[RMDB]
About this RNA:
The data come from the RNA Mapping Database (RMDB), libraries RFM100 and RFMREP. The record gives the reactivity of an RNA of 177 nucleotides to 2A3 and DMS.

RNA sequence: GGGAACGACUCGAGUAGAGUCGAAAAGAAGAUUAAAGGUUAAUAUAUGAGUGGCCUUUAUAGAGUGCAAUAUAUGUAUUUGUAGACGAGGAGGAUAGUGAUCGAAUAGAUCGGCGGAUGCUAUCCCUGUAAUUAGUAAUUUCGAUUACUAAUUACAAAAAGAAACAACAACAACAAC
Reactivity to 2A3 in 0.01 (KOAc 150mM, MgCl2 10mM, bicine 150mM(pH8.5), 24C), signal-to-noise 9, nucleotides 027 to 126: g020a030a000g030a020u060u060a020a010a020g030g010u030u060a150a030u110a110u070a090u300g110a040g150u060g020g000c000c000u020u030u010a070u070a030g100a020g040u060g020c020a070a010u050a020u020a030u210g090u090a140u060u100u070g060u060a060g020a100c060g020a040g060g030a040g010g000a020u010a010g070u090g050a020u020c010g010a070a070u090a150g060a040u040c020g030g020c030g060g010a010u070g010c000u010a010u020c000c000c000
Reactivity to DMS in 0.01 (KOAc 150mM, MgCl2 10mM, bicine 150mM(pH8.5), 24C), signal-to-noise 9, nucleotides 027 to 126: g010a150a120g010a110u010u010a020a020a020g000g010u000u010a060a090u020a140u030a120u030g010a130g020u000g000g000c010c010u000u000u000a020u010a100g010a100g010u010g000c040a040a060u030a070u020a070u010g010u010a040u010u000u010g010u010a070g010a100c110g010a110g010g010a100g010g000a030u000a030g020u010g000a030u000c020g000a080a090u030a100g000a020u000c030g010g010c080g010g000a060u010g000c020u010a030u000c000c010c060